[RMDB]
RNA sequence: GGGAACGACUCGAGUAGAGUCGAAAAAGAGAGAGAGAGAGCGAGCGCGCAACAUGAGUCUCAAAGGCCAAACUCCGGCCAGUCAGGAGCCGGAAGGCUGAGCCCGGCUGACCUGACUUUGAGCUUCCCCGGAGUUAUCUCGCAUGGGCGCUCGCUACAUCCUAGCUCGAUUCGUCGAGCUAGGAUGAAAAGAAACAACAACAACAAC
Reactivity to 2A3 in 0.01 (KOAc 150mM, MgCl2 10mM, bicine 150mM(pH8.5), 24C), signal-to-noise 1, nucleotides 027 to 156: a000g110a000g010a000g010a020g000a010g000a000g000a010g010c010g000a010g000c010g010c040g030c010a040a050c020a110u050g020a050g060u030c030u090c240a130a120a040g050g000c020c040a040a040a000c020u020c000c000g030g000c050c010a000g000u000c000a000g000g000a000g010c000c000g050g020a060a030g110g010c170u120g050a040g020c000c000c000g020g030c020u030g100a090c000c000u000g020a010c000u030u030u090g010a000g010c010u100u080c030c040c000c010g000g010a000g000u000u050a050u090c080u030c020g010c060a040u050g000g070g010c000g010c000u000c000g010c000u000a010